[RMDB]
RNA sequence: GGGAACGACUCGAGUAGAGUCGAAAAGAUAUGGACCACCUGAGCUAGGCGGGUGUUCGGAAACGAACAUUGCCUUGGACCUCAGGGUGGUCCUAAGUCAAAACGCCAUUGCUUCGGCAAUGGCGAACAAAUCAAUAUAGUUCGCUAUAUUGAUUUGAAAAGAAACAACAACAACAAC
Reactivity to DMS in 0.01 (KOAc 150mM, MgCl2 10mM, bicine 150mM(pH8.5), 24C), signal-to-noise 3, nucleotides 027 to 126: g000a040u010a300u000g000g000a020c000c000a040c000c000u000g010a020g020c060u000a020g010g020c010g010g010g030u000g000u000u000c000g010g000a110a120a230c000g010a010a010c000a010u000u000g010c000c000u000u000g020g010a120c300c000u000c010a020g010g020g010u000g010g010u000c000c000u000a000a070g010u010c050a090a090a140a180c020g010c010c000a010u000u000g010c010u000u010c250g020g000c000a000a000u000g000g010c000g000a010a070
Reactivity to 2A3 in 0.01 (KOAc 150mM, MgCl2 10mM, bicine 150mM(pH8.5), 24C), signal-to-noise 6, nucleotides 027 to 126: g020a010u070a020u180g010g000a000c000c000a000c000c000u000g000a010g020c060u060a030g070g000c120g110g140g020u020g000u010u000c000g020g040a090a060a040c020g000a010a000c010a010u010u090g020c000c000u030u100g120g090a130c030c000u010c030a030g150g010g020u040g000g000u000c000c000u000a030a000g030u000c020a000a010a120a160c030g000c010c000a000u010u010g000c020u070u100c250g170g000c010a000a010u010g000g000c000g000a000a000

Source information
The data come from the RNA Mapping Database (RMDB), library TTRDES. The record gives the reactivity of an RNA of 177 nucleotides to DMS and 2A3. Conditions: 150 mM KOAc, 10 mM MgCl2 and 150 mM bicine (pH 8.5), 24 C. Values cover nucleotides 27 to 126. For DMS the reverse transcriptase was MarathonRT.